[RMDB]
RNA sequence: GGGAACGACUCGAGUAGAGUCGAAAAUGGAUGUGUGGCAUCCGGAACUGACACCACAGCAGAGACGCAGCCUUCCAGCAAUUUAGCAUGAAUUCAUGCAAGCUUGGGAAACUCUGGAGAGAGGCUAGCUGCAGGAUCGAUUCGUCGAUCCUGCAGCAAAAGAAACAACAACAACAAC
Reactivity to DMS in 0.01 (KOAc 150mM, MgCl2 10mM, bicine 150mM(pH8.5), 24C), signal-to-noise 1, nucleotides 027 to 126: u000g000g020a070u000g040u000g000u020g030g000c010a050u000c000c000g010g000a100a040c090u000g000a120c180a130c010c010a030c010a080g020c060a070g020a100g000a040c180g040c060a070g010c120c070u000u010c000c000a000g000c160a120a120u000u000u030a110g000c000a000u000g010a240a180u010u000c010a000u020g040c050a060a100g010c170u000u000g010g000g000a080a170a140c040u000c010u000g040g010a200g000a110g010a040g030g000c050u000a120